[RMDB]
RNA sequence: GGGAACGACUCGAGUAGAGUCGAAAAGCUCAGUGUGUCUCGCCCCGUCGUCUAGUGCUGGUUCUAGGGCUGGGGCGUCAGCAUCCAGGUCUGACGGGACGGGCAGUAUCUCGCCAUCAACGAUAAAUGGGAUUAGGAAUUUCGAUUCCUAAUCCCAAAAAGAAACAACAACAACAAC
Reactivity to DMS in 0.01 (KOAc 150mM, MgCl2 10mM, bicine 150mM(pH8.5), 24C), signal-to-noise 1, nucleotides 027 to 126: g010c020u010c070a080g010u000g010u000g010u010c000u010c000g020c020c000c000c010g020u000c020g000u000c000u000a040g020u010g000c050u000g000g000u000u000c060u010a070g000g010g010c060u010g030g010g040g000c050g000u010c040a000g000c010a030u000c050c050a000g030g000u000c040u020g030a040c000g000g000g010a030c020g000g020g010c020a050g010u000a060u000c040u000c070g010c020c040a090u010c080a050a070c050g000a140u020a040a060a100